[RMDB]
RNA sequence: GGGAACGACUCGAGUAGAGUCGAAAAUGUAUGAUAUGCGCGACCGUCUUCUUGAUGCUGAAGCUCGCCGUGACCAAGAAGCCAUGACUUCGCUUCGUCGUCAAAUCUCUGAAGCUCAAGAGCUUGCUGCGACAACUGCACGAUUGGAUGCAGCAGACAUAAUUGAGUUGUUCGCAACUCAAUUAUGAAAAGAAACAACAACAACAAC
Reactivity to DMS in 0.01 (KOAc 150mM, MgCl2 10mM, bicine 150mM(pH8.5), 24C), signal-to-noise 5, nucleotides 027 to 156: u010g010u000a060u010g010a140u010a080u000g000c060g020c020g010a110c030c060g010u000c050u000u000c050u000u010g010a050u020g020c030u000g020a120a060g010c060u000c200g020c020c040g020u000g030a040c020c030a170a160g010a110a040g030c000c050a070u000g020a120c090u000u010c160g030c000u000u000c010g020u000c070g010u000c030a020a060a080u010c020u000c030u040g010a160a120g000c010u000c020a060a100g000a100g000c070u000u000g030c000u010g010c000g010a160c040a060a030c020u000g000c020a050c030g020a300u000u000g020g020a130u000g020c010a010g010c010a080g010a240
Reactivity to 2A3 in 0.01 (KOAc 150mM, MgCl2 10mM, bicine 150mM(pH8.5), 24C), signal-to-noise 9, nucleotides 027 to 156: u140g030u080a100u130g060a080u070a060u190g050c080g010c020g040a060c060c060g090u060c050u100u010c000u050u050g040a080u230g010c020u030g020a070a030g010c040u030c040g030c030c030g010u020g010a030c010c030a060a060g010a010a000g030c010c060a130u200g090a200c080u100u080c120g000c010u020u020c010g050u030c010g020u020c000a050a110a130u050c060u000c010u050g080a030a000g020c000u010c040a050a030g010a020g060c060u070u080g010c010u010g010c000g030a020c010a040a030c020u190g050c110a040c130g200a280u020u070g030g030a090u090g000c000a000g000c010a000g010a020